An RNA of 177 nucleotides, treated with DMS and 2A3 and read out base by base. DMS (dimethyl sulfate) methylates the pairing face of unpaired adenines and cytosines. It was measured as part of the RMDB library OK1LIB. The reactions ran in a buffer of 150 mM KOAc, 10 mM MgCl2 and 150 mM bicine (pH 8.5), at 24 C. The DMS profile rests on 6,985 reads. For 2A3, 8,056 sequencing reads were counted.
[RMDB]
RNA sequence: GGGAACGACUCGAGUAGAGUCGAAAAGAUUACGUGUCGUUGUCGAAUCGAUACUACGCACGAGAUUCCAAGGUCUCUGUAGUACGUCCGCUGGUGACGUCUUUGGAGUCACGUUCGAUAUACGAAACGAAUCUACUAGGUUCGCCUAGUAGAUUCGAAAAGAAACAACAACAACAAC
Reactivity to DMS in 0.01 (KOAc 150mM, MgCl2 10mM, bicine 150mM(pH8.5), 24C), signal-to-noise 3, nucleotides 027 to 126: g020a090u010u020a090c080g050u020g050u000c020g000u000u000g040u000c050g020a070a120u020c030g000a110u020a070c140u000a030c000g010c130a040c020g000a100g000a040u000u000c030c090a040a030g000g000u010c050u010c050u030g000u010a030g000u020a010c060g030u000c010c030g010c220u040g020g020u020g000a010c030g000u000c010u000u020u010g010g000a030g000u000c020a070c020g000u000u000c000g000a120u010a040u000a090c010g000a040a090a120
Reactivity to 2A3 in 0.01 (KOAc 150mM, MgCl2 10mM, bicine 150mM(pH8.5), 24C), signal-to-noise 7, nucleotides 027 to 126: g070a090u140u200a050c100g030u070g060u090c030g000u000u030g050u020c010g010a020a050u050c020g000a010u020a070c050u030a030c020g010c020a030c080g010a010g000a010u060u020c060c020a050a030g060g000u020c010u000c030u110g070u060a050g030u070a050c020g030u010c030c030g110c190u170g080g120u190g010a000c010g040u030c020u070u040u100g040g010a020g000u010c020a020c060g020u020u030c020g010a020u020a000u020a100c040g020a040a100a000